The record gives the reactivity of an RNA of 207 nucleotides to DMS and 2A3. The reactions ran in a buffer of 150 mM KOAc, 10 mM MgCl2 and 150 mM bicine (pH 8.5), at 24 C. Reactivities are given for positions 27 through 156.
[RMDB]
RNA sequence: GGGAACGACUCGAGUAGAGUCGAAAAAUGGCGAAUGCAUGGGGAACUACAUCUGUGUCGCGAGUUCGAUUCUCGCCGGGGCCUGGUCCUGUAGCUCAGUUGGUAGAGCAAGCUGUUCCCCGGACACAAAAUCCAGCUAGGUUCGCCUAGCUGGAAAGUAUGUACUCGUCUUCGGACGAGUACAUACAAAAGAAACAACAACAACAAC
Reactivity to DMS in 0.01 (KOAc 150mM, MgCl2 10mM, bicine 150mM(pH8.5), 24C), signal-to-noise 1, nucleotides 027 to 156: a130u000g000g000c050g010a000a090u020g000c040a130u010g030g010g000g040a060a070c000u000a000c020a040u000c050u000g050u000g040u000c050g010c000g020a050g010u000u000c090g010a300u000u000c000u000c040g010c010c050g010g010g000g010c080c100u000g130g060u030c010c050u020g000u010a000g020c010u000c030a130g010u030u010g020g010u030a110g020a070g000c030a090a130g020c040u000g000u000u000c020c030c000c050g000g010a160c040a090c070a000a020a090a110u000c000c000a010g020c000u000a010g000g050u000u000c300g030c020c030u000a040g020c000u000g000g000a000a000a040
Reactivity to 2A3 in 0.01 (KOAc 150mM, MgCl2 10mM, bicine 150mM(pH8.5), 24C), signal-to-noise 2, nucleotides 027 to 156: a010u070g050g030c080g110a150a030u150g030c100a050u110g000g010g000g020a000a030c020u090a020c090a110u120c050u060g090u040g080u170c040g020c010g030a010g010u020u020c010g000a020u020u020c000u000c020g010c020c010g010g010g000g010c040c220u150g040g000u070c020c020u030g020u020a000g000c000u030c030a040g000u180u150g140g110u200a030g020a000g000c010a000a020g020c040u030g020u020u050c000c010c010c000g000g010a000c030a000c010a060a150a000a000u030c000c000a000g000c000u000a000g000g040u060u000c070g080c080c000u000a000g000c010u000g020g000a000a000a000